[RMDB]
An RNA of 177 nucleotides, treated with DMS and 2A3 and read out base by base.

RNA sequence: GGGAACGACUCGAGUAGAGUCGAAAAGACGCGGAAGGGAGAGUCAAAAAGAGAAAGAGACCUAAAGGGUGAAAGCGAAUCGGGGAAGAUAAGCUAGCAGCAAAAAGGAACCGAUUCCCACCAAGUUAAUCCGAACAGUUUUCGAACUGUUCGGAUUAAAAGAAACAACAACAACAAC
Reactivity to DMS in 0.01 (KOAc 150mM, MgCl2 10mM, bicine 150mM(pH8.5), 24C), signal-to-noise 2, nucleotides 027 to 126: g000a090c290g000c100g000g000a000a040g000g020g000a050g030a040g000u020c050a050a110a030a130a130g000a050g040a000a010a110g000a120g000a120c130c000u010a060a050a090g010g010g000u000g000a070a020a090g070c130g020a020a020u000c040g000g000g000g000a130a130g030a040u000a080a250g000c000u020a130g010c210a140g000c000a020a050a100a090a010g000g000a210a250c070c030g000a050u000u000c000c120c000a040c100c000a020a270g010u030u020
Reactivity to 2A3 in 0.01 (KOAc 150mM, MgCl2 10mM, bicine 150mM(pH8.5), 24C), signal-to-noise 2, nucleotides 027 to 126: g020a000c020g030c020g030g000a040a080g050g010g000a020g010a030g010u040c000a010a000a000a130a100g070a000g070a000a120a000g050a000g040a030c010c030u080a090a010a050g080g000g000u030g070a120a130a000g030c140g040a010a000u010c000g000g030g020g040a000a060g040a100u190a160a000g010c000u100a040g100c150a010g000c000a030a020a030a010a020g200g000a040a000c000c010g000a000u000u000c010c000c000a010c000c000a040a000g000u000u000
As a SHAPE reagent, 2A3 marks flexible, mostly unpaired nucleotides at the ribose 2'-OH. For 2A3, 1,113 sequencing reads were counted. The RNA was probed in 150 mM KOAc, 10 mM MgCl2 and 150 mM bicine (pH 8.5) at 24 C.